[RMDB]
RNA sequence: GGGAACGACUCGAGUAGAGUCGAAAACAAUAGUGUCUUUAACAUUUUGCAGGCGACAACUGCUAAUGUCAGUGCACUUAUGGGUGCUAAUGGCAACAAGAUUGUUGACAAAGAAGUUAAAGACAUGGUUACUCAACAACUUCGGUUGUUGAGUAACAAAAGAAACAACAACAACAAC
Reactivity to 2A3 in 0.01 (KOAc 150mM, MgCl2 10mM, bicine 150mM(pH8.5), 24C), signal-to-noise 2, nucleotides 027 to 126: c030a000a040u130a180g000u010g010u000c010u010u030u000a030a000c020a280u040u090u010u130g090c080a080g040g020c020g040a010c020a000a020c020u050g010c090u090a100a020u010g010u010c000a000g070u010g040c020a000c000u110u110a090u270g230g000g000u000g000c020u050a230a170u050g030g020c010a050a010c020a010a060g020a030u000u020g000u000u010g010a020c010a010a080a020g050a000a000g000u000u000a000a010a000g000a000c000a000u020g000
Reactivity to DMS in 0.01 (KOAc 150mM, MgCl2 10mM, bicine 150mM(pH8.5), 24C), signal-to-noise 2, nucleotides 027 to 126: c040a170a090u000a130g060u000g010u000c010u000u000u000a000a000c000a130u000u000u000u010g000c230a210g000g000c020g010a000c040a000a030c050u010g000c140u000a070a140u000g000u000c000a010g030u000g020c020a040c000u000u010a090u000g000g000g030u000g000c000u000a020a080u010g030g020c000a000a110c060a050a180g000a270u000u010g040u010u000g000a010c030a090a080a030g000a020a040g030u000u000a010a000a010g000a010c000a010u000g010
Overview:
An RNA of 177 nucleotides, treated with 2A3 and DMS and read out base by base. Conditions: 150 mM KOAc, 10 mM MgCl2 and 150 mM bicine (pH 8.5), 24 C. High DMS reactivity at an A or C suggests that its Watson-Crick edge is free. For DMS the reverse transcriptase was MarathonRT. High 2A3 reactivity points to a flexible backbone, as in loops and unpaired stretches. The data come from the RNA Mapping Database (RMDB), library 15KREP.